[RMDB]
RNA sequence: GGGAACGACUCGAGUAGAGUCGAAAAAUUUUGGACUUGAAUCUAAUCCUUCUCAUGAAAGAUACGGCCAUCGGGAGAUUCAACACUUAUCUGACGCUGAUUCAAAGACAGGAUCGGAGAUACUCCGACCAGGAGGUUGUUUCGACAACCUCCUGGUAAAAGAAACAACAACAACAAC
Reactivity to 2A3 in 0.01 (KOAc 150mM, MgCl2 10mM, bicine 150mM(pH8.5), 24C), signal-to-noise 3, nucleotides 027 to 126: a000u110u120u000u080g040g020a020c000u040u030g030a030a020u040c040u080a050a100u040c010c000u060u030c010u000c010a110u190g100a120a090a040g060a040u140a110c100g010g070c030c040a060u050c030g010g050g000a050g030a050u030u050c020a010a090c040a020c050u080u070a050u100c030u060g030a030c000g030c130u070g010a110u120u050c030a110a050a060g050a030c030a030g090g050a020u000c000g020g030a030g050a110u080a160c020u010c000c010g000
Reactivity to DMS in 0.01 (KOAc 150mM, MgCl2 10mM, bicine 150mM(pH8.5), 24C), signal-to-noise 2, nucleotides 027 to 126: a090u040u010u000u050g000g000a100c110u000u020g000a130a050u010c040u000a150a080u040c020c010u000u000c010u020c060a240u000g000a030a100a040g010a070u020a040c090g030g000c020c050a130u000c080g000g010g000a080g000a020u030u030c150a110a130c200a030c060u010u000a010u010c040u000g010a070c300g030c030u000g030a080u000u000c020a040a120a070g010a070c050a070g060g020a000u000c000g000g000a020g050a250u000a020c080u000c010c000g000
About this RNA:
Structure probing data (2A3 and DMS) for a 177-nucleotide construct. The data come from the RNA Mapping Database (RMDB), library OK1LIB. For DMS, 1,468 sequencing reads were counted. For 2A3 the reverse transcriptase was SuperScript II with manganese. DMS adducts were read by reverse transcription with MarathonRT. Reactivities are given for positions 27 through 126. For 2A3, 1,086 sequencing reads were counted.